Background:
The data come from the RNA Mapping Database (RMDB), library OK2TST. The record gives the reactivity of an RNA of 177 nucleotides to 2A3 and DMS. For DMS, 10,201 sequencing reads were counted. Values cover nucleotides 27 to 126. The reactions ran in a buffer of 150 mM KOAc, 10 mM MgCl2 and 150 mM bicine (pH 8.5), at 24 C.

[RMDB]
RNA sequence: GGGAACGACUCGAGUAGAGUCGAAAACAUUGAUCACAACAUUAGGUGUAGAAGUGGAUCCUAAAUGGAAUGUUGAAACAAAUAUAGUGUCCGAUGCCAGGUAUGCAAACUACAUAAUAGCAAAUGACUUACCUUUCUAUUUCGAUAGAAAGGUAAGAAAAGAAACAACAACAACAAC
Reactivity to 2A3 in 0.01 (KOAc 150mM, MgCl2 10mM, bicine 150mM(pH8.5), 24C), signal-to-noise 5, nucleotides 027 to 126: c030a040u060u120g030a060u130c040a010c020a130a050c030a070u070u080a050g000g060u050g050u100a040g030a220a020g070u080g080g040a030u030c000c010u080a130a140a080u080g040g040a090a050u080g030u090u090g060a130a090a010c030a020a110a000u170a020u040a090g060u040g020u000c010c010g040a020u040g010c020c010a010g020g040u050a010u100g020c020a050a070a050c020u070a020c020a060u170a140a040u050a090g070c030a060a040a170u090g010a030
Reactivity to DMS in 0.01 (KOAc 150mM, MgCl2 10mM, bicine 150mM(pH8.5), 24C), signal-to-noise 8, nucleotides 027 to 126: c060a080u010u000g020a110u000c060a090c060a060a070c070a080u000u000a060g020g010u000g010u010a070g010a170a100g020u010g010g000a090u000c040c010u000a030a070a070u000g000g010a080a050u010g010u010u000g010a090a080a060c090a060a070a060u000a090u000a100g020u010g010u000c040c030g010a090u000g000c030c040a040g000g010u000a030u010g010c090a050a050a100c070u010a040c060a040u000a050a070u000a090g020c090a040a080a100u000g000a190